[RMDB]
Annotation: Conditions: 150 mM KOAc, 10 mM MgCl2 and 150 mM bicine (pH 8.5), 24 C. Structure probing data (DMS and 2A3) for a 177-nucleotide construct. It was measured as part of the RMDB library OK2TST. Values cover nucleotides 27 to 126. 2A3 adducts were read by reverse transcription with SuperScript II with manganese.
RNA sequence: GGGAACGACUCGAGUAGAGUCGAAAACUGGCUCGCGGGUCGGCGCCAGGGUACACCUUCGUUGCCGGGGACGACAGGCAUGCACGCGGAUCGGCGCGCGAAGAUCCGCCCGGCGACCCGGGAAGCAUCCGAUAAUAGCUUUCGAGCUAUUAUCGGAAAAAGAAACAACAACAACAAC
Reactivity to DMS in 0.01 (KOAc 150mM, MgCl2 10mM, bicine 150mM(pH8.5), 24C), signal-to-noise 2, nucleotides 027 to 126: c040u000g010g000c010u000c030g010c020g000g000g010u010c010g020g000c080g000c140c040a100g020g020g040u010a110c270a110c050c000u000u000c020g010u000u010g010c020c000g020g000g000g010a110c040g000a160c120a030g000g000c270a090u020g000c050a100c040g000c000g030g010a100u000c070g000g000c010g010c160g010c020g000a040a040g000a080u000c170c170g020c050c050c030g000g020c020g000a050c020c010c000g000g000g010a070a090g020c030a150
Reactivity to 2A3 in 0.01 (KOAc 150mM, MgCl2 10mM, bicine 150mM(pH8.5), 24C), signal-to-noise 1, nucleotides 027 to 126: c020u030g070g000c000u000c030g130c010g020g010g010u000c000g070g060c040g030c020c020a120g030g030g020u050a050c050a040c050c000u040u020c010g030u050u050g040c010c000g000g000g000g100a040c030g030a050c030a060g030g140c060a020u190g060c050a030c140g000c030g000g080a080u060c030g040g030c020g020c020g000c020g080a010a010g000a030u050c070c050g000c000c000c020g030g010c010g020a010c020c000c000g020g040g000a040a020g040c010a030